[RMDB]
RNA sequence: GGGAACGACUCGAGUAGAGUCGAAAAUUAAAGGAGGAGGAGGAGUGUGUGUCUUCCCAGCUGCUGAGUAGAACCUCCGCACACACGCGAAAGCUACGAGCAGCAGCAGUGCGCAAACGGUGAAAAAGAUUAAAGAAUCCUUCGGGAUUCUUUAAUCAAAAGAAACAACAACAACAAC
Reactivity to DMS in 0.01 (KOAc 150mM, MgCl2 10mM, bicine 150mM(pH8.5), 24C), signal-to-noise 2, nucleotides 027 to 126: u000u010a070a080a140g010g010a050g000g020a050g010g000a110g030g030a190g030u000g020u030g000u000g020u010c100u010u010c000c030c000a110g050c020u000g010c020u020g000a130g020u000a040g020a080a090c050c040u000c090c050g000c040a120c160a060c180a060c200g000c070g010a060a130a080g000c010u000a010c030g000a090g000c040a010g020c050a040g000c000a090g030u010g010c010g000c050a080a060a080c130g020g000u010g000a070a070a090a110a120

This 177-nucleotide RNA was probed chemically with DMS. The DMS profile rests on 1,291 reads.